[RMDB]
RNA sequence: GGGAACGACUCGAGUAGAGUCGAAAAAUGCCGCAUUCAGGGACGGUAACUCUAGUGGGCGACUGUCAAUCUAGCGUUGACAUCUACAUACUAUAUAGUAAUACCAAUACUCAAGACUACGAAACGGCAUGAGCUGAGUGUUCGCACUCAGCUCAUGAAAAGAAACAACAACAACAAC
Reactivity to 2A3 in 0.01 (KOAc 150mM, MgCl2 10mM, bicine 150mM(pH8.5), 24C), signal-to-noise 4, nucleotides 027 to 126: a000u130g000c000c000g050c020a050u060u080c030a050g040g000g030a030c010g000g020u050a080a090c020u040c010u040a030g020u060g040g010g000c050g000a040c090u030g010u020c000a000a010u000c010u080a070g070c030g120u000u000g020a010c010a000u030c000u060a090c020a070u080a040c030u020a030u050a040u070a210g090u090a100a110u000a090c010c010a100a040u050a100c010u010c050a120a080g050a130c020u100a040c100g070a030a060a020c030g040g000
Reactivity to DMS in 0.01 (KOAc 150mM, MgCl2 10mM, bicine 150mM(pH8.5), 24C), signal-to-noise 2, nucleotides 027 to 126: a010u000g000c070c010g010c060a120u010u040c060a120g000g010g020a050c040g000g040u000a040a050c100u000c160u010a020g020u030g000g000g000c300g120a070c130u080g000u000c000a000a060u020c000u070a120g010c090g010u020u010g000a020c000a110u000c040u020a020c070a040u030a110c030u000a070u040a170u040a020g000u000a090a080u000a040c010c040a060a000u000a020c040u050c040a050a070g040a080c150u020a040c100g000a000a070a030c040g070g000